[RMDB]
Chemical mapping of a 177-nucleotide RNA with 2A3 and DMS. DMS adducts were read by reverse transcription with MarathonRT. The data come from the RNA Mapping Database (RMDB), library TTRDES. The 2A3 profile rests on 2,148 reads.
RNA sequence: GGGAACGACUCGAGUAGAGUCGAAAAGAUAUGGACCGUUAUUGCAACAGCGUGCUAUCGGAAACGAUAGUCACGACAUGCAAUAACGGUCCUAAGUCAAAGAGUGUAUACUUCGGUAUACACUCAAGAUCUGUACCACGUUCGCGUGGUACAGAUCAAAAGAAACAACAACAACAAC
Reactivity to 2A3 in 0.01 (KOAc 150mM, MgCl2 10mM, bicine 150mM(pH8.5), 24C), signal-to-noise 1, nucleotides 027 to 126: g000a030u020a020u060g030g010a010c020c000g060u010u030a040u030u000g120c300a300a100c070a300g020c000g040u020g000c000u000a000u010c000g000g000a000a020a000c000g030a000u020a000g040u070c040a010c000g020a010c000a030u260g000c000a000a000u000a000a000c010g000g010u000c020c020u000a000a000g000u010c020a120a040a110g030a020g010u030g010u030a000u000a000c060u020u040c190g100g000u000a020u000a000c010a000c000u000c010a000a010
Reactivity to DMS in 0.01 (KOAc 150mM, MgCl2 10mM, bicine 150mM(pH8.5), 24C), signal-to-noise 1, nucleotides 027 to 126: g010a000u000a030u020g000g000a010c000c000g010u000u000a000u000u010g000c000a190a080c210a090g010c000g020u010g000c000u000a000u000c010g000g010a030a010a030c010g010a020u000a010g000u010c020a000c010g000a030c120a100u030g000c000a010a010u000a000a010c000g010g010u000c000c000u000a000a050g000u000c000a110a140a180g000a020g010u000g010u000a010u000a010c000u000u010c260g030g010u010a000u000a000c000a000c000u000c010a030a070